[RMDB]
RNA sequence: GGGAACGACUCGAGUAGAGUCGAAAAGGGAUCGGAUCCGAAGCCCCAUUGAGGGAUAAUACAGGCUCUCCCAUCCAACUCCUAUUCCAACACGUCCUCGUCGUACAGAGUGGUAACAUGUGUCACCUAUACUAAUGACCGUUCGCGGUCAUUAGAACCAGGGAAGAGAGUUCGCUCUCUUCCCUGGAAAAGAAACAACAACAACAAC
Reactivity to 2A3 in 0.01 (KOAc 150mM, MgCl2 10mM, bicine 150mM(pH8.5), 24C), signal-to-noise 1, nucleotides 027 to 156: g080g000g000a010u030c000g000g030a070u170c010c020g000a020a020g020c060c000c060c000a100u170u230g040a280g100g010g000a060u100a080a000u140a260c180a220g000g000c020u000c000u010c010c040c000a000u000c000c000a030a050c120u070c060c000u090a120u160u070c060c010a040a000c000a020c070g030u010c000c010u030c020g050u030c000g010u100a100c050a020g090a070g070u140g000g000u040a050a020c090a100u010g070u000g110u110c010a080c030c000u080a080u020a300c000u000a020a000u000g000a010c000c000g000u040u040c300g000c000g130g000u000c000a000u000u000a000g010a000a000